[RMDB]
RNA sequence: GGGAACGACUCGAGUAGAGUCGAAAACCCGGUUAGGCUGGCGCCGUGCGCCCUUCCCCCGGGGGAUCGCUCCUGGGUGUCCGGGGAGCCGCAUAGCCGACAGCCGUCGCAUUUGAGGGAGCCCUUAGCUUCAUACGAAUUUCGAUUCGUAUGAAGCAAAAGAAACAACAACAACAAC
Reactivity to DMS in 0.01 (KOAc 150mM, MgCl2 10mM, bicine 150mM(pH8.5), 24C), signal-to-noise 4, nucleotides 027 to 126: c010c000c010g010g010u020u000a080g010g020c030u000g000g010c110g030c090c020g040u000g020c020g000c060c030c040u000u020c080c040c010c000c010g000g020g000g010g010a100u050c300g020c030u000c000c030u000g000g020g010u010g010u050c120c150g010g000g010g000a090g010c300c020g000c030a030u010a050g020c090c020g010a040c040a020g010c020c010g010u000c070g000c070a080u020u020u010g020a130g000g000g010a110g020c040c070c030u000u010a240
Reactivity to 2A3 in 0.01 (KOAc 150mM, MgCl2 10mM, bicine 150mM(pH8.5), 24C), signal-to-noise 6, nucleotides 027 to 126: c000c000c000g010g030u100u140a030g000g010c010u010g010g000c010g000c030c030g000u000g000c020g020c000c000c030u040u120c010c000c000c000c000g010g000g000g000g010a050u080c070g060c300u010c010c000u020g010g010g030u080g050u000c070c060g000g030g000g000a020g040c050c010g000c010a020u030a050g020c050c020g010a020c000a010g010c010c010g020u040c020g000c060a150u050u060u220g100a090g010g010g010a050g030c010c000c000u030u060a020